[RMDB]
RNA sequence: GGGAACGACUCGAGUAGAGUCGAAAAGAUAUGGACUGAGCGAUAAGACCGUAUCGGAAACGAUAUAGGUCUUUUGACGCUCUAGUCCUAAGUCAAAGGCGAUAUCUGGUUCGCCAGAUAUCGCCAAGAUUGUCGAAAUCUUCGGAUUUCGACAAUCAAAAGAAACAACAACAACAAC
Reactivity to DMS in 0.01 (KOAc 150mM, MgCl2 10mM, bicine 150mM(pH8.5), 24C), signal-to-noise 1, nucleotides 027 to 126: g000a010u010a100u020g000g000a010c000u010g000a010g000c000g020a040u020a020a010g010a010c010c050g000u000a000u010c010g000g000a060a030a060c010g000a010u000a000u000a030g080g000u010c000u000u000u000u010g000a300c020g000c000u010c010u000a000g020u000c000c000u000a030a050g020u000c030a060a100a090g040g010c000g030a010u000a010u000c000u000g000g000u000u010c300g020c000c000a000g000a030u000a010u010c000g010c000c000a020a010